[RMDB]
RNA sequence: GGGAACGACUCGAGUAGAGUCGAAAAGAUAUGGAGCCAUAUUGGGCUACUGUACUCGACGAUCGACUUUCGGAAACGAAAGUCGAUUAGAGUACACUAGCCAGGUGGCUCCUAAGUCAAAGAACCUUGGUGAAGCUUCGGCUUCACCAAGGUUCAAGUAUUUUGAUAUCUUCGGAUAUCAAAAUACAAAAGAAACAACAACAACAAC
Reactivity to 2A3 in 0.01 (KOAc 150mM, MgCl2 10mM, bicine 150mM(pH8.5), 24C), signal-to-noise 1, nucleotides 027 to 156: g020a010u050a070u180g010g000a000g000c000c000a020u060a300u150u300g290g040g000c000u000a010c010u030g010u010a000c000u010c020g050a090c230g050a060u000c000g000a000c020u000u000u000c010g000g010a140a080a090c010g010a000a000a000g000u000c000g000a000u000u000a010g000a000g010u000a000c000a000c000u000a000g000c020c000a000g030g020u000g010g000c000u010c000c000u000a000a000g010u000c010a070a050a060g000a010a010c000c010u000u000g000g000u010g010a000a000g000c050u080u170c300g170g000c030u070u000c090a000c010c010a040a000g010g000u000u000c000a000a000